[RMDB]
RNA sequence: GGGAACGACUCGAGUAGAGUCGAAAAGGACGUUUCGACGUCCGAAGCGGGGUCUUCUGCUUCGAGGCUUUUGACGAGCUGAAGCCUCCACGGCUCGAUAAGCUCCCCACCGAAGUAAAGAAGACGGAGGCACCCAUAUACGCCGAUUCGUCGGCAAAUGAAUAAGUUAUUUCGAUAACUUAUUCAUAAAAGAAACAACAACAACAAC
Reactivity to DMS in 0.01 (KOAc 150mM, MgCl2 10mM, bicine 150mM(pH8.5), 24C), signal-to-noise 3, nucleotides 027 to 156: g010g000a030c000g030u000u000u000c150g010a100c000g010u000c000c010g020a010a050g020c070g020g030g040g020u000c010u000u000c010u000g000c020u010u000c020g020a190g050g010c030u000u000u000u010g010a160c090g000a060g030c040u020g000a050a080g020c000c010u000c020c030a300c040g020g020c000u000c010g020a210u020a080a080g010c010u030c300c030c030c100a300c070c000g000a030a070g020u000a050a170a110g000a040a040g000a040c030g000g010a080g030g050c030a070c010c010c010a120u010a140u010a080c080g020c020c000g020a070u000u000c260g040u000c010g010g040c010a000a070
Reactivity to 2A3 in 0.01 (KOAc 150mM, MgCl2 10mM, bicine 150mM(pH8.5), 24C), signal-to-noise 6, nucleotides 027 to 156: g000g000a000c010g000u050u100u180c200g110a030c000g000u010c000c010g010a050a000g100c170g010g040g050g010u010c000u010u000c000u020g010c010u010u010c010g040a100g090g030c020u070u080u140u220g220a150c080g010a000g000c000u000g010a040a010g010c000c000u000c000c010a040c020g010g000c000u000c010g060a070u030a160a010g000c010u120c050c080c010c000a020c000c020g010a010a010g010u070a160a150a180g020a000a000g000a000c010g000g000a000g000g000c000a020c000c010c010a030u090a030u060a180c080g000c020c000g000a010u030u060c160g060u020c000g100g000c000a050a050